[RMDB]
RNA sequence: GGGAACGACUCGAGUAGAGUCGAAAAUGGGGUACAGGCCAAAGAGGGAGGCAUUUGGUGAGUAUUCUGCAGAGUCUCCUCUGCUGUGCUGAGGUGUGGACAAUGGGAAACCAUGGACGGACUGGAGCACUGAGCUGAACUUCGGUUCAGCUCAGUGAAAAGAAACAACAACAACAAC
Reactivity to 2A3 in 0.01 (KOAc 150mM, MgCl2 10mM, bicine 150mM(pH8.5), 24C), signal-to-noise 1, nucleotides 027 to 126: u070g010g010g000g040u050a040c040a010g110g000c000c020a040a040a000g120a060g000g000g000a020g000g030c060a090u040u040u070g010g000u040g010a030g020u050a040u130u050c040u100g080c030a010g020a000g060u030c030u010c100c030u020c010u000g050c030u070g000u020g000c010u020g000a020g000g040u080g040u090g060g030a020c020a120a130u050g030g020g040a040a030a020c010c020a030u030g000g020a020c020g020g020a030c030u030g010g030a040g000
Reactivity to DMS in 0.01 (KOAc 150mM, MgCl2 10mM, bicine 150mM(pH8.5), 24C), signal-to-noise 1, nucleotides 027 to 126: u010g010g030g000g020u000a060c070a040g010g000c070c090a040a060a070g000a130g010g010g010a100g000g020c050a040u000u000u000g000g010u010g000a140g030u000a090u000u000c020u000g010c030a010g010a110g000u000c120u000c070c010u000c020u010g000c010u000g000u010g020c000u000g000a130g010g010u000g020u000g020g000a070c080a050a070u000g010g010g000a090a060a140c060c010a040u000g010g030a070c060g000g000a100c040u000g000g010a080g010